RNA sequence: GGGAACGACUCGAGUAGAGUCGAAAACUCUGGGCUUCCUGGGGGCUGGUCCCUCCUUUUGGCAAGCAGAUGUCCCCAGGCUGUCCAGGCCAGAUCUGAGGCAGGGGACAGCCGUAUUUAGUGACGCCGGGUGAAAAGGAUUCGUCCUUUUCACCCGAAAAGAAACAACAACAACAAC
Reactivity to 2A3 in 0.01 (KOAc 150mM, MgCl2 10mM, bicine 150mM(pH8.5), 24C), signal-to-noise 2, nucleotides 027 to 126: c000u000c020u020g050g050g030c020u020u000c010c010u020g030g000g010g020g040c030u100g070g050u110c030c030c010u100c010c010u040u220u140u180g060g010c070a050a050g000c000a040g070a140u100g030u050c020c010c000c010a020g010g000c010u000g000u000c000c000a010g000g000c010c000a070g010a270u120c080u260g100a090g030g000c000a030g050g090g010g000a000c020a000g000c000c000g020u010a180u020u190u140a120g030u040g020a010c040g040c090
Reactivity to DMS in 0.01 (KOAc 150mM, MgCl2 10mM, bicine 150mM(pH8.5), 24C), signal-to-noise 2, nucleotides 027 to 126: c090u000c020u010g020g000g020c030u000u000c040c010u010g000g000g020g010g000c050u000g020g020u020c080c060c010u010c020c040u010u000u000u000g020g020c140a070a070g000c000a040g010a110u010g010u000c020c000c010c070a120g010g000c030u000g010u000c020c000a090g000g000c020c020a110g000a090u000c180u010g010a090g020g030c020a090g000g000g000g000a060c020a020g020c000c010g010u000a020u020u000u000a090g010u010g010a120c120g010c110

Structure probing data (2A3 and DMS) for a 177-nucleotide construct.
For DMS, 2,747 sequencing reads were counted.
The RNA was probed in 150 mM KOAc, 10 mM MgCl2 and 150 mM bicine (pH 8.5) at 24 C.
DMS (dimethyl sulfate) methylates the pairing face of unpaired adenines and cytosines.
For 2A3 the reverse transcriptase was SuperScript II with manganese.
For 2A3, 1,519 sequencing reads were counted.
Reactivities are given for positions 27 through 126.